An RNA of 207 nucleotides, treated with 2A3 and DMS and read out base by base. The reactions ran in a buffer of 150 mM KOAc, 10 mM MgCl2 and 150 mM bicine (pH 8.5), at 24 C. It was measured as part of the RMDB library RSTRND. For DMS, 2,112 sequencing reads were counted.
[RMDB]
RNA sequence: GGGAACGACUCGAGUAGAGUCGAAAAGGCAAGGCGUCAUAAAUCAGAGCUAUCCUAAGGCACAAACCCGAUGCCUUAGGGAGAGCUAAGGGUUGUAGGAGCUUAGAGAGCCUGUGGAAGGGCGAGCUAACUUCCGAAUCCUAAAACUUCCACUAAGCGUAGUAUACACCUUCGGGUGUAUACUACGAAAAGAAACAACAACAACAAC
Reactivity to 2A3 in 0.01 (KOAc 150mM, MgCl2 10mM, bicine 150mM(pH8.5), 24C), signal-to-noise 3, nucleotides 027 to 156: g070g020c040a030a030g030g000c010g040u070c080a110u130a200a080a080u140c080a090g020a010g090c020u060a150u210c000c000u000a010a000g000g000c010a000c030a070a040a050c010c010c020g040a040u010g000c000c010u010u000a000g010g020g010a120g010a000g000c050u120a120a170g000g000g000u020u010g000u020a010g000g000a000g010c040u000u020a010g010a000g000a010g040c000c030u050g010u010g000g010a000a000g010g000g000c000g000a010g000c000u000a020a010c010u230u060c030c000g010a020a010u080c040c000u000a010a010a010a010c010u010u000c000c010a000c020u010a110a000g050
Reactivity to DMS in 0.01 (KOAc 150mM, MgCl2 10mM, bicine 150mM(pH8.5), 24C), signal-to-noise 1, nucleotides 027 to 156: g020g040c040a120a060g000g000c070g020u000c040a160u000a060a070a120u000c040a110g000a130g020c000u010a090u000c000c000u010a030a040g000g020c010a050c010a060a000a290c000c020c020g000a120u010g000c000c010u030u000a010g000g000g000a020g000a030g000c020u020a120a120g020g020g030u000u000g040u000a060g000g010a120g020c040u010u000a060g000a100g030a300g010c040c040u000g040u000g010g000a160a190g040g010g030c010g010a160g020c050u000a040a010c010u000u000c010c010g000a090a110u040c070c020u000a020a050a050a040c020u000u000c030c010a070c020u010a100a100g000